[RMDB]
RNA sequence: GGGAACGACUCGAGUAGAGUCGAAAAGAUAUGGAUACGUCCGAAGGAGCAGGAGUCCCUCGGAAACGAGAACCUCCUGAACUACUCUGUAGACGUAUCCUAAGUCAAAGCUCAGUUCGCUGAGCAAGACACAUCUACGGUUCGCCGUAGAUGUGUCAAAAGAAACAACAACAACAAC
Reactivity to 2A3 in 0.01 (KOAc 150mM, MgCl2 10mM, bicine 150mM(pH8.5), 24C), signal-to-noise 2, nucleotides 027 to 126: g010a010u080a020u130g000g000a010u010a020c010g020u030c070c040g110a110a120g010g030a030g050c000a010g000g000a000g100u220c090c010c000u000c010g000g010a070a030a040c000g000a000g000a020a030c030c000u000c000c000u000g010a020a010c010u140a090c010u070c090u220g050u120a000g010a010c000g000u000a000u000c010c000u000a020a010g000u010c020a000a120a120g000c000u010c010a000g040u100u180c280g000c160u030g010a010g000c000a000a010
Reactivity to DMS in 0.01 (KOAc 150mM, MgCl2 10mM, bicine 150mM(pH8.5), 24C), signal-to-noise 2, nucleotides 027 to 126: g030a060u020a300u010g050g000a040u000a000c000g020u000c010c010g060a160a210g000g000a020g000c010a020g000g010a060g000u000c170c180c020u040c000g000g010a030a100a210c030g000a030g010a120a120c300c020u000c000c020u000g020a030a050c040u030a300c010u000c010u000g020u000a150g010a030c010g000u000a000u000c000c010u000a050a110g010u000c030a080a060a090g000c000u000c000a010g010u000u010c230g020c000u010g000a000g000c010a030a080
About this RNA
The data come from the RNA Mapping Database (RMDB), library TTRDEL. Structure probing data (2A3 and DMS) for a 177-nucleotide construct. For 2A3, 2,919 sequencing reads were counted. For DMS the reverse transcriptase was MarathonRT. Values cover nucleotides 27 to 126. The reactions ran in a buffer of 150 mM KOAc, 10 mM MgCl2 and 150 mM bicine (pH 8.5), at 24 C.